Description: Chemical mapping of a 177-nucleotide RNA with 2A3 and DMS. In probing experiments dimethyl sulfate is read out at A N1 and C N3, which are open when not base-paired. Values cover nucleotides 27 to 126. The reactions ran in a buffer of 150 mM KOAc, 10 mM MgCl2 and 150 mM bicine (pH 8.5), at 24 C. For DMS, 2,447 sequencing reads were counted. The 2A3 profile rests on 1,069 reads. DMS adducts were read by reverse transcription with MarathonRT. It was measured as part of the RMDB library OK2TRN.
RNA sequence: GGGAACGACUCGAGUAGAGUCGAAAACUUUCAUGUUCAGAGGAGGAAUUAUCUUAGACAGACUAUGGUUUUUAGGAUUGCCCUGUUGAAUGUAGAACCUUAGUAAUUCUCAUGCUCAGUGAAGCAAACUGUCGUUGUUAUUCGUAACAACGACAGUAAAAGAAACAACAACAACAAC
Reactivity to 2A3 in 0.01 (KOAc 150mM, MgCl2 10mM, bicine 150mM(pH8.5), 24C), signal-to-noise 2, nucleotides 027 to 126: c000u070u090u050c030a040u040g000u000u010c020a000g000a020g020g100a030g050g040a110a100u160u010a030u060c020u030u070a030g030a020c000a000g040a080c070u090a070u210g080g040u060u000u060u120u220a000g000g050a020u020u060g060c030c020c000u060g140u180u110g050a050a010u030g010u020a080g010a100a000c000c020u020u050a050g020u080a030a110u090u010c050u080c020a020u030g040c020u030c040a140g110u090g270a050a000g000c030a070a000
Reactivity to DMS in 0.01 (KOAc 150mM, MgCl2 10mM, bicine 150mM(pH8.5), 24C), signal-to-noise 3, nucleotides 027 to 126: c050u010u010u000c050a060u010g010u010u010c060a070g010a050g000g000a080g010g000a090a050u020u000a060u010c040u010u000a070g020a100c140a090g000a110c180u010a080u000g000g010u000u000u000u000u000a040g010g020a140u000u000g000c070c010c030u000g000u000u000g020a060a050u000g000u010a060g010a040a060c060c060u000u000a070g010u010a070a120u000u000c010u000c020a120u000g020c000u000c020a130g010u000g010a080a060g000c070a070a110